[RMDB]
RNA sequence: GGGAACGACUCGAGUAGAGUCGAAAAACCUCCACCUUCGGGUGGAGGUCGUGCGUAGCUGCGUUAAAUUAAUAGCUACCCUUAAUAAAUUUAUUUAACGCAUAAAACUGUGUUUCGACACAGUUAACUUAAUUGUCAUAUUCGUAUGACAAUUAAGAAAAGAAACAACAACAACAAC
Reactivity to DMS in 0.01 (KOAc 150mM, MgCl2 10mM, bicine 150mM(pH8.5), 24C), signal-to-noise 5, nucleotides 027 to 126: a020c000c000u000c000c000a000c000c000u000u020c220g030g030g040u000g010g000a000g000g010u010c010g000u000g010c150g010u000a040g020c070u010g010c010g010u000u000a010a000a030u000u010a060a060u010a100g010c030u000a120c020c020c050u000u020a070a100u010a080a090a130u000u000u000a060u010u000u000a000a000c000g010c010a170u010a050a070a040a020c000u000g010u000g010u000u000u020c150g010a050c000a010c000a010g000u000u010a030a120
Reactivity to 2A3 in 0.01 (KOAc 150mM, MgCl2 10mM, bicine 150mM(pH8.5), 24C), signal-to-noise 6, nucleotides 027 to 126: a000c000c000u010c000c000a000c010c010u040u060c260g120g000g000u020g000g010a010g000g000u000c010g040u060g020c060g060u070a050g050c080u040g000c010g010u010u010a020a010a020u070u140a070a120u060a080g030c020u040a060c000c000c000u100u170a130a070u150a130a240a060u160u130u050a040u010u020u000a030a010c000g000c010a010u160a050a230a000a010c000u000g010u000g010u010u070u070c160g040a010c000a000c000a000g010u020u040a040a000
Structure probing data (DMS and 2A3) for a 177-nucleotide construct. The 2A3 profile rests on 9,499 reads. For DMS, 6,918 sequencing reads were counted. Conditions: 150 mM KOAc, 10 mM MgCl2 and 150 mM bicine (pH 8.5), 24 C. For 2A3 the reverse transcriptase was SuperScript II with manganese. Reactivities are given for positions 27 through 126.